[RMDB]
RNA sequence: GGGAACGACUCGAGUAGAGUCGAAAAAUAUCUUGUUAAUCCGUAAACAGUUUCAGUAGCAUUUGGAUAUAAUAAUCUUGUUGCCAAUGUUGCUGGUGUGACCGCUUUAGUAUUAUCAGUUCCAUCGAUGACUUCCUGUUCAGUGGCAAGAAAUAAACUAAAUAUUACGUUUCGACGUAAUAUUUAGAAAAGAAACAACAACAACAAC
Reactivity to 2A3 in 0.01 (KOAc 150mM, MgCl2 10mM, bicine 150mM(pH8.5), 24C), signal-to-noise 7, nucleotides 027 to 156: a000u130a040u040c020u050u040g020u050u060a090a080u060c050c040g060u060a060a070a030c030a060g020u070u160u100c020a010g000u040a010g010c010a010u030u060u250g000g020a030u060a000u040a150a090u100a090a070u100c080u090u120g090u100u120g040c010c010a020a030u010g010u000u010g010c010u010g000g030u030g010u030g020a040c020c020g040c060u100u080u100a040g040u060a050u130u050a060u130c040a030g030u070u010c030c010a030u050c050g050a030u030g020a030c020u050u020c030c010u030g020u080u050c030a030g030u040g040g000c020a030a020g050a070a120a050u200a060a030a020
Reactivity to DMS in 0.01 (KOAc 150mM, MgCl2 10mM, bicine 150mM(pH8.5), 24C), signal-to-noise 4, nucleotides 027 to 156: a100u000a060u010c060u000u000g010u000u000a070a100u010c040c040g020u010a110a060a080c030a080g010u000u000u010c040a100g010u000a070g030c020a070u000u000u000g010g010a100u000a060u010a040a100u000a090a100u000c120u000u000g020u000u000g020c030c030a080a140u000g000u000u010g010c010u000g020g010u000g030u000g000a080c040c020g040c060u010u000u000a070g010u010a070u000u000a080u000c040a060g010u000u000c040c020a080u000c020g010a100u000g000a080c050u000u000c010c020u010g020u010u000c050a120g030u010g010g020c020a050a090g000a050a060a090u010a060a080a180
This 207-nucleotide RNA was probed chemically with 2A3 and DMS. The 2A3 profile rests on 5,571 reads.